[RMDB]
RNA sequence: GGGAACGACUCGAGUAGAGUCGAAAAGAAAGCGUGUGUCGUAUGACCGGCCGAAUGCGACGGCUGCGAUGCAGUCUUUUUCGCGUUUGUCCUUGAUGCUGGUAGGCCGGUUAUAGCAUCGGACGAAGGCGUUUGGCGACUUCGGUUGCCGGGCGCCAAAAGAAACAACAACAACAAC
Reactivity to DMS in 0.01 (KOAc 150mM, MgCl2 10mM, bicine 150mM(pH8.5), 24C), signal-to-noise 9, nucleotides 027 to 126: g010a070a050a070g000c050g010u010g010u010g010u010c030g020u010a050u020g000a050c010c000g010g000c010c010g030a110a050u010g000c010g010a040c300g000g000c010u000g010c000g010a120u040g000c010a020g010u000c000u010u020u020u030u010c010g010c030g020u000u010u020g010u010c010c010u020u030g020a030u010g020c020u000g000g010u010a130g010g010c000c000g000g000u010u000a020u020a020g010c010a010u000c010g000g000a040c030g010a110a120
Reactivity to 2A3 in 0.01 (KOAc 150mM, MgCl2 10mM, bicine 150mM(pH8.5), 24C), signal-to-noise 9, nucleotides 027 to 126: g100a020a070a000g050c050g010u080g010u020g020u080c060g060u050a040u090g040a050c000c000g000g000c010c000g070a100a020u080g010c010g010a010c030g030g000c000u010g000c040g050a050u300g000c010a010g010u030c010u080u150u030u050u070c020g010c020g020u030u080u130g050u040c010c010u050u210g020a030u080g020c050u060g050g100u070a080g020g000c010c000g000g000u000u010a010u000a000g000c000a000u020c000g010g020a020c030g020a120a030